[RMDB]
RNA sequence: GGGAACGACUCGAGUAGAGUCGAAAACUUGAAAAAGAACGUGGGAUUACAAUCCUUGCGAAAAAUACGGCAGUAGCCUAUAACGAUGUUCGUAUUAACAUCAUGGAUACCCCAGGACACGCGGACUUCGGUGGUGAAGUUGAACGUAUCAUGAAAAGAUAUAGCCCCUAUUCGUAGGGGCUAUAUCAAAAGAAACAACAACAACAAC
Reactivity to 2A3 in 0.01 (KOAc 150mM, MgCl2 10mM, bicine 150mM(pH8.5), 24C), signal-to-noise 2, nucleotides 027 to 156: c000u000u010g030a010a010a050a100a130g070a060a030c150g000u020g000g030g010a020u100u180a070c110a070a170u030c010c000u090u110g040c010g040a110a000a000a020a000u000a020c010g000g000c000a050g030u050a000g020c020c020u150a140u100a210a030c040g030a020u080g000u050u090c050g010u030a050u140u130a120a030c030a060u070c030a070u060g040g010a030u070a140c030c010c030c050a010g040g000a040c040a020c140g000c020g000g020a000c020u010u000c020g040g030u100g050g000u050g030a030a020g000u050u060g070a100a000c030g010u010a010u120c060a040u140g150a030a090a060a010
Reactivity to DMS in 0.01 (KOAc 150mM, MgCl2 10mM, bicine 150mM(pH8.5), 24C), signal-to-noise 1, nucleotides 027 to 156: c050u000u000g000a120a060a190a130a030g010a100a030c040g050u000g020g020g010a070u000u000a150c080a110a220u010c030c020u000u000g010c060g000a020a080a080a020a070u000a020c010g000g000c040a030g000u000a090g010c000c000u000a140u000a030a040c030g010a050u020g020u010u000c060g000u000a040u000u010a140a200c040a070u000c010a100u000g000g000a120u000a240c070c020c000c000a070g020g000a060c050a040c010g020c030g020g010a050c020u000u000c000g090g000u030g000g000u000g000a060a080g020u000u000g030a060a050c080g010u000a030u000c020a110u000g000a100a060a050a040
Source: RMDB library OK3TST, as collected in RNAgym. The record gives the reactivity of an RNA of 207 nucleotides to 2A3 and DMS. Conditions: 150 mM KOAc, 10 mM MgCl2 and 150 mM bicine (pH 8.5), 24 C. For DMS the reverse transcriptase was MarathonRT. 2A3 adducts were read by reverse transcription with SuperScript II with manganese. For 2A3, 717 sequencing reads were counted. For DMS, 1,824 sequencing reads were counted.